RNA sequence: GGGAACGACUCGAGUAGAGUCGAAAAGGUUAGGCUAUUACAGUAACCUCAGCAGGAAAGAGCAUGGUGAUAUCUUGGACUGGAGUGUUGACAUUGGAAAUGGAGAAGGAGGUAGAAUUGGUAGGUCUCGGUUAUAGAUUGGAUAUGGGAGUGGAGAUAGCAUAUCACCUUUCGAGGUGAUAUGCUAAAAAGAAACAACAACAACAAC
Reactivity to 2A3 in 0.01 (KOAc 150mM, MgCl2 10mM, bicine 150mM(pH8.5), 24C), signal-to-noise 3, nucleotides 027 to 156: g060g000u020u020a020g010g040c070u070a030u140u130a120c030a070g040u030a010a010c000c010u060c040a040g030c000a010g000g080a070a040a050g060a030g000c090a050u060g010g000u050g050a030u030a030u140c050u060u110g020g010a030c000u050g010g060a050g010u100g000u050u060g040a030c030a050u000u090g000g020a010a020a100u060g040g020a050g010a070a020g040g020a000g000g010u030a030g070a090a070u090u050g030g000u060a030g020g010u010c010u010c070g000g000u040u020a070u030a070g060a030u020u110g020g010a000u010a060u210g040g030g010a050g000u050g030g000a040g000a050
Reactivity to DMS in 0.01 (KOAc 150mM, MgCl2 10mM, bicine 150mM(pH8.5), 24C), signal-to-noise 2, nucleotides 027 to 156: g050g080u000u000a040g010g050c040u000a090u000u000a130c070a160g020u000a030a070c020c030u010c050a130g000c060a110g040g000a080a030a120g000a110g000c050a120u020g040g040u010g000a100u010a080u010c090u020u020g010g020a140c030u010g010g020a150g050u000g020u000u000g020a030c040a080u000u000g010g010a070a070a190u000g010g020a120g030a070a090g010g030a000g030g040u010a060g010a080a150u010u010g030g000u000a050g010g030u000c030u000c060g000g010u010u020a050u000a080g010a140u010u010g000g010a060u010a070u010g010g020g000a090g030u000g000g010a060g010a160
This 207-nucleotide RNA was probed chemically with 2A3 and DMS. For 2A3, 1,447 sequencing reads were counted. The RNA was probed in 150 mM KOAc, 10 mM MgCl2 and 150 mM bicine (pH 8.5) at 24 C. For DMS, 2,920 sequencing reads were counted. For DMS the reverse transcriptase was MarathonRT.